[RMDB]
RNA sequence: GGGAACGACUCGAGUAGAGUCGAAAAACAGAAAAAAGGAGUUUAAAUUAGAUUUGCAAACGGACGGUACUAAAUACCGUCACUUUUACGUCUAACUUAUCGUUAAAUCUGCAAAAAGAAAACAAGAAAAACAAGCGUGAGUUCGCUCACGCUUGAACAACUACUAUCACUUCGGUGAUAGUAGUUGAAAAGAAACAACAACAACAAC
Reactivity to DMS in 0.01 (KOAc 150mM, MgCl2 10mM, bicine 150mM(pH8.5), 24C), signal-to-noise 1, nucleotides 027 to 156: a030c000a110g030a010a110a110a150a080a260g010g000a220g010u000u000u000a010a030a030u000u000a000g000a010u000u010u010g090c030a000a030a030c190g000g080a000c000g000g010u000a050c030u030a080a000a300u010a000c000c010g050u000c000a000c000u000u000u000u000a040c010g000u010c000u000a010a030c000u000u030a000u000c190g040u000u000a040a040a190u000c030u000g000c000a000a050a080a110a120g000a040a080a120a140c030a030a060g000a080a030a130a160a050c000a000a030g040c000g100u010g010a050g000u000u000c300g000c010u000c000a010c000g100c000u000u010g020a090a120
Reactivity to 2A3 in 0.01 (KOAc 150mM, MgCl2 10mM, bicine 150mM(pH8.5), 24C), signal-to-noise 3, nucleotides 027 to 156: a000c000a000g070a030a080a000a000a020a030g100g020a100g030u170u180u150a070a070a020u040u040a010g040a030u040u040u220g060c050a040a030a000c030g020g000a000c000g010g010u020a020c050u250a060a060a160u050a010c000c010g000u010c000a030c000u000u010u010u040a030c020g010u010c000u010a020a030c000u060u060a040u110c020g050u020u050a030a180a050u050c030u060g070c070a040a020a040a040a030g070a030a080a040a000c070a040a050g130a090a060a000a010a010c000a000a010g000c010g000u000g000a010g000u040u110c180g000c120u000c000a000c000g000c000u000u000g000a000a000